[RMDB]
RNA sequence: GGGAACGACUCGAGUAGAGUCGAAAAGAUAUGGACGAUUCCAGCAACAGCUGUCGGAUCGGAAACGAUCCACAGACAUGCUGAGAAUCGUCCUAAGUCAAACCGGUGGUUCUUCGGAACCACCGGAGCUAUACCAGUACUUCGGUACUGGUAUAGCAAAAGAAACAACAACAACAAC
Reactivity to 2A3 in 0.01 (KOAc 150mM, MgCl2 10mM, bicine 150mM(pH8.5), 24C), signal-to-noise 4, nucleotides 027 to 126: g010a000u020a010u070g000g000a010c010g010a000u010u000c000c020a010g000c060a070a190c070a220g040c000u030g020u200c280g020g000a000u000c000g000g000a000a010a010c010g000a000u000c010c010a000c010a000g030a020c050a220u300g000c000u030g020a070g000a100a000u000c000g000u000c000c000u000a010a000g010u000c010a030a040a100c000c000g000g000u000g010g020u020u000c020u040u080c300g140g010a000a000c000c000a000c000c000g000g000a000
Reactivity to DMS in 0.01 (KOAc 150mM, MgCl2 10mM, bicine 150mM(pH8.5), 24C), signal-to-noise 4, nucleotides 027 to 126: g010a020u000a150u030g000g010a020c000g000a010u010u000c000c010a020g020c000a090a090c290a180g000c000u010g000u000c240g030g010a000u000c000g010g010a030a050a080c000g000a010u000c000c000a020c000a020g010a030c120a220u010g010c000u000g000a120g000a010a010u000c000g010u000c000c000u000a010a110g000u000c020a120a130a220c010c000g000g010u000g010g010u000u000c000u010u020c250g020g000a010a000c010c000a010c000c000g000g000a010